[RMDB]
RNA sequence: GGGAACGACUCGAGUAGAGUCGAAAAUUACAUAAGUCUAACACCUUGUUUCGGACUAACAAGGGCGCAUGGAGGAUGGCCGGACCUCCAUAGGUAGACGUCCGAGAACCAGCCGAAAGGAAAAAGAGGAUUAGCUACGAUUCGUCGUAGCUAAUCCAAAAGAAACAACAACAACAAC
Reactivity to 2A3 in 0.01 (KOAc 150mM, MgCl2 10mM, bicine 150mM(pH8.5), 24C), signal-to-noise 2, nucleotides 027 to 126: u180u040a130c070a000u180a100a090g030u050c000u030a090a080c040a050c040c020u000u040g060u030u060u040c050g110g000a060c050u010a020a070c010a000a040g080g000g000c030g010c020a010u010g000g000a000g000g020a020u020g030g070c000c000g000g060a070c000c000u000c000c000a000u000a040g010g030u020a040g020a230c070g000u060c000c000g060a090g010a030a060c040c020a020g000c000c010g080a080a020a000g040g030a000a100a010a000a000g150a020
Reactivity to DMS in 0.01 (KOAc 150mM, MgCl2 10mM, bicine 150mM(pH8.5), 24C), signal-to-noise 2, nucleotides 027 to 126: u060u030a050c220a090u000a070a050g000u000c070u020a100a140c150a140c070c030u000u030g010u010u000u010c070g000g020a140c110u040a040a090c000a030a060g000g000g000c090g000c110a030u040g010g020a010g010g010a110u020g000g000c000c030g000g000a150c050c010u000c000c000a000u000a020g020g000u000a080g000a130c060g000u000c000c040g000a130g000a070a140c040c010a110g010c010c000g000a050a020a070g000g000a140a040a040a030a050g010a240